This 177-nucleotide RNA was probed chemically with 2A3 and DMS.
RNA sequence: GGGAACGACUCGAGUAGAGUCGAAAACAACUCUUUACCAUCGAUGCAUUAACGUGGAUGCAACCGAAGGAUUUACAAGCACGUUUACAAGCGCUUCGUAAUGAUGAGUUAGCGAUUCUGAUUAAGGCAACACCCCAUAGUUCGCUAUGGGGUGUUGAAAAGAAACAACAACAACAAC
Reactivity to 2A3 in 0.01 (KOAc 150mM, MgCl2 10mM, bicine 150mM(pH8.5), 24C), signal-to-noise 2, nucleotides 027 to 126: c010a000a020c000u030c000u020u190u130a090c000c000a030u030c000g010a020u010g000c010a010u020u050a160a110c160g100u080g160g060a000u020g010c000a010a030c060c000g030a050a060g010g000a060u050u000u000a010c000a000a060g010c010a020c060g010u070u040u090a070c070a100a040g020c000g000c040u020u050c080g000u010a040a050u080g090a040u030g010a010g000u000u020a010g060c020g070a060u090u020c020u020g100a160u050u170a040a010g090g000
Reactivity to DMS in 0.01 (KOAc 150mM, MgCl2 10mM, bicine 150mM(pH8.5), 24C), signal-to-noise 4, nucleotides 027 to 126: c060a050a060c020u000c000u000u010u010a220c010c030a090u010c020g020a110u000g000c020a040u000u000a110a080c230g020u010g010g000a030u000g000c030a060a060c110c010g020a040a060g020g010a180u000u000u000a020c030a030a010g040c010a030c020g010u010u020u000a160c270a120a120g000c080g000c010u000u000c200g030u010a030a040u000g000a080u000g000a050g000u000u000a060g040c070g000a070u000u000c000u000g010a130u010u020a110a110g000g000